The record gives the reactivity of an RNA of 207 nucleotides to 2A3. Reactivities are given for positions 27 through 156. The RNA was probed in 150 mM KOAc, 10 mM MgCl2 and 150 mM bicine (pH 8.5) at 24 C.

[RMDB]
RNA sequence: GGGAACGACUCGAGUAGAGUCGAAAAGGGGUCGAGAUCUCUAGCGUGACCCGAAGAACUGGUGCUAGUCCUGAAGCCUCCACGGGACUUGGACCACCAGGGAGGGUUCGGGUCUCGACGGAGGCACCCAAAAGUUCUGAACUUCGGUUCAGAACAACCACAGUUAGCAGUUCGCUGCUAACUGUGGAAAAGAAACAACAACAACAAC
Reactivity to 2A3 in 0.01 (KOAc 150mM, MgCl2 10mM, bicine 150mM(pH8.5), 24C), signal-to-noise 3, nucleotides 027 to 156: g050g020g000g050u080c080g050a080g040a270u090c100u020c020u160a050g040c030g140u170g080a070c020c050c040g010a100a050g020a020a040c080u150g030g010u050g060c050u040a020g080u060c000c030u080g050a090a040g010c000c000u000c000c000a020c010g000g000g010a000c010u000u030g020g010a000c000c030a120c080c090a150g050g090g020a200g000g020g000u000u000c000g000g000g010u000c010u000c000g050a060c030g000g000a010g000g010c000a000c000c040c000a040a110a000a040g000u000u010c000u010g000a000a000c000u040u160c280g110g000u000u000c000a000g000a000a000c000a000a010